[RMDB]
RNA sequence: GGGAACGACUCGAGUAGAGUCGAAAAGAAGACGUGACGAAAAGUCACGAAAAGGUGCAAUGUCAUUUAAGCACCAAACACGGAAAAACCGUGAAAUGACAAACGAGUGGGAGACCACUCGAAAAGAACCUCCUAUAGUAUUCGUACUAUAGGAGGUAAAAGAAACAACAACAACAAC
Reactivity to 2A3 in 0.01 (KOAc 150mM, MgCl2 10mM, bicine 150mM(pH8.5), 24C), signal-to-noise 7, nucleotides 027 to 126: g130a070a020g100a030c010g000u000g000a000c000g050a060a160a080a140g000u000c000a000c000g000a010a020a000a020g010g000u010g000c030a080a200u120g030u010c000a010u010u060u150a050a020g000c000a000c000c020a010a020a000c000a000c000g000g030a210a090a020a030a010c010c010g010u000g000a050a030a010u010g010a000c010a030a130a000c020g000a000g000u000g000g020g010a100g020a090c000c000a000c010u000c000g000a000a030a000a010g060a010
Reactivity to DMS in 0.01 (KOAc 150mM, MgCl2 10mM, bicine 150mM(pH8.5), 24C), signal-to-noise 4, nucleotides 027 to 126: g000a140a040g010a150c000g050u000g000a030c020g010a110a080a080a160g000u000c000a000c000g000a070a050a130a080g010g010u000g020c010a120a120u040g020u000c010a020u000u000u020a100a140g020c010a000c010c000a030a090a180c010a040c000g010g000a140a130a110a130a120c000c000g010u000g000a000a040a020u000g000a000c000a070a070a220c020g000a010g050u010g010g020g010a200g000a200c000c010a000c010u000c000g000a020a030a080a110g010a120
The data come from the RNA Mapping Database (RMDB), library OK1LIB. An RNA of 177 nucleotides, treated with 2A3 and DMS and read out base by base. The RNA was probed in 150 mM KOAc, 10 mM MgCl2 and 150 mM bicine (pH 8.5) at 24 C. Reactivities are rounded to 0.1 and cut off at 0 and 3.